[RMDB]
RNA sequence: GGGAACGACUCGAGUAGAGUCGAAAAACUGAUACCUUACGAGGUAUCAGAAUGACUUCGUGGUAGAGAGCCACGAACGGAAAAUAAAGAAAGCUCGAUUGAAACGCACCGUGUACGCACGGUGCGAAAAAGUCGAUCCAGUUCGCUGGAUCGACAAGACUAUUGAGGAGUUCGCUCCUCAAUAGUCAAAAGAAACAACAACAACAAC
Reactivity to 2A3 in 0.01 (KOAc 150mM, MgCl2 10mM, bicine 150mM(pH8.5), 24C), signal-to-noise 1, nucleotides 027 to 156: a000c000u000g000a000u000a000c000c000u080u020a050c150g090a000g030g010u000a000u000c000a000g000a020a100u080g020a030c020u020u090c000g000u000g010g000u080a090g000a000g000a000g210c030c000a000c020g000a020a010c040g010g070a110a100a030a030u240a050a170a040g130a130a110a010g080c050u020c070g130a180u020u260g030a060a070a030c020g000c000a020c050c060g060u000g050u010a010c170g020c110a000c000g010g010u000g000c000g010a000a000a000a000a000g000u000c000g000a000u050c000c000a000g000u050u020c040g030c090u000g000g000a000u000c000g020a000c000a000a010